[RMDB]
RNA sequence: GGGAACGACUCGAGUAGAGUCGAAAAUGUUCAAACACCCAUGUUUUACAAUCAGAUUUCAUAUUGUUCAAACACACAUUUUACAAACAAUUUGUACAGGUAACACAAUCAUCACAGGGUCCUGAGGUAACCCAAUAUACUUCGGUAUAUUGGGUUAAAAAGAAACAACAACAACAAC
Reactivity to 2A3 in 0.01 (KOAc 150mM, MgCl2 10mM, bicine 150mM(pH8.5), 24C), signal-to-noise 3, nucleotides 027 to 126: u030g010u010u120c050a090a060a050c010a100c000c000c000a030u040g030u020u080u020u040a010c010a040a040u040c050a120g090a280u130u200u130c070a030u110a030u200u060g020u050u090c040a010a050a010c030a000c000a000c020a050u020u050u040u130a100c060a070a080a000c020a060a120u050u040u070g030u050a080c030a040g020g040u080a090a000c030a000c000a040a060u090c020a010u020c030a020c030a100g010g070g030u010c010c010u070g030a040g080g000
Reactivity to DMS in 0.01 (KOAc 150mM, MgCl2 10mM, bicine 150mM(pH8.5), 24C), signal-to-noise 7, nucleotides 027 to 126: u010g000u000u010c150a100a110a140c130a110c030c010c010a240u010g010u000u000u000u010a050c030a030a040u000c130a080g000a180u000u020u000c100a080u010a060u000u000g010u000u010c100a030a040a040c040a090c100a030c050a040u000u000u000u000a110c150a080a050a070c130a040a080u010u000u000g020u000a060c090a060g000g010u000a030a050c060a030c050a050a050u000c060a020u000c050a040c060a080g010g000g000u000c010c020u000g000a100g010g010
Overview: An RNA of 177 nucleotides, treated with 2A3 and DMS and read out base by base. Source: RMDB library OK2TRN, as collected in RNAgym. For 2A3, 2,815 sequencing reads were counted. For DMS the reverse transcriptase was MarathonRT.